[RMDB]
RNA sequence: GGGAACGACUCGAGUAGAGUCGAAAAAUCGGCGUUGCGGCUCCGCUUCUGCUGGCGCUCUGCCGUCUGGGUCAGGGGCUGGGUCUUGGCGGCGAAUGGGGCGGUGCAGUGCUGCUCGCCACCGAAACGGUACUCAUCAUUUCGAUGAUGAGUACCGAAAAGAAACAACAACAACAAC
Reactivity to 2A3 in 0.01 (KOAc 150mM, MgCl2 10mM, bicine 150mM(pH8.5), 24C), signal-to-noise 2, nucleotides 027 to 126: a010u060c020g030g030c030g060u090u030g020c010g000g000c030u020c040c000g020c020u070u010c000u040g050c020u040g110g000c010g000c010u080c060u100g060c050c000g020u000c030u090g070g000g070u120c000a030g010g040g080g010c030u070g060g010g000u000c000u030u040g000g000c010g000g000c000g010a040a060u180g020g040g000g010c000g000g000u070g040c030a050g050u060g200c050u030g010c000u040c010g040c010c010a090c000c010g050a060a040a010
Reactivity to DMS in 0.01 (KOAc 150mM, MgCl2 10mM, bicine 150mM(pH8.5), 24C), signal-to-noise 1, nucleotides 027 to 126: a150u010c030g010g000c030g010u020u000g010c120g000g030c020u000c020c100g010c020u000u010c020u000g060c050u020g000g000c020g030c060u010c100u000g030c080c020g000u010c000u000g040g020g010u010c010a060g000g000g000g010c040u010g010g000g020u000c030u000u000g000g000c020g010g010c000g000a030a070u000g020g020g010g030c010g040g010u000g010c030a090g000u000g000c070u020g000c020u000c000g010c000c000a070c030c020g020a090a070a220
An RNA of 177 nucleotides, treated with 2A3 and DMS and read out base by base.
Source: RMDB library OK2TST, as collected in RNAgym.
The 2A3 profile rests on 2,127 reads.
Values cover nucleotides 27 to 126.